Structure probing data (2A3 and DMS) for a 177-nucleotide construct. The reactions ran in a buffer of 150 mM KOAc, 10 mM MgCl2 and 150 mM bicine (pH 8.5), at 24 C. For DMS, 1,861 sequencing reads were counted. The data come from the RNA Mapping Database (RMDB), library 15KREP.
RNA sequence: GGGAACGACUCGAGUAGAGUCGAAAAUGGUAACAUGUUUAUUAAAUUUCCUGAAGUAGUAUUUGAAAGUACACUUAGGAUUACUAGAACUCUGUCAACUCAGUACUGCCGGUUCGGUAGUUGUGAGGAUCAAUGAAUGGUUCGCCAUUCAUUGAUCAAAAGAAACAACAACAACAAC
Reactivity to 2A3 in 0.01 (KOAc 150mM, MgCl2 10mM, bicine 150mM(pH8.5), 24C), signal-to-noise 3, nucleotides 027 to 126: u040g030g010u040a020a000c030a060u110g010u020u060u060a110u020u130a120a120a130u030u080u050c010c000u020g070a040a000g000u190a010g000u000a050u030u060u270g230a170a110a010g010u000a000c000a010c010u010u000a010g000g020a030u040u050a050c030u040a060g090a130a020c020u000c020u100g130u090c030a010a050c020u000c010a000g040u030a020c000u000g000c000c000g260g070u210u300c080g030g000u020a010g000u000u030g270u020g060a030g000
Reactivity to DMS in 0.01 (KOAc 150mM, MgCl2 10mM, bicine 150mM(pH8.5), 24C), signal-to-noise 2, nucleotides 027 to 126: u000g000g010u020a050a070c060a060u010g000u000u020u000a090u010u000a060a100a130u010u000u000c000c010u000g020a020a050g030u000a130g030u000a010u000u000u000g000a140a100a210g000u010a010c020a060c010u000u000a060g000g000a040u000u000a060c120u000a120g010a080a090c100u000c060u000g000u000c090a050a280c020u020c020a030g000u000a040c010u000g010c000c010g020g010u000u010c060g030g000u000a000g010u010u000g010u010g010a020g000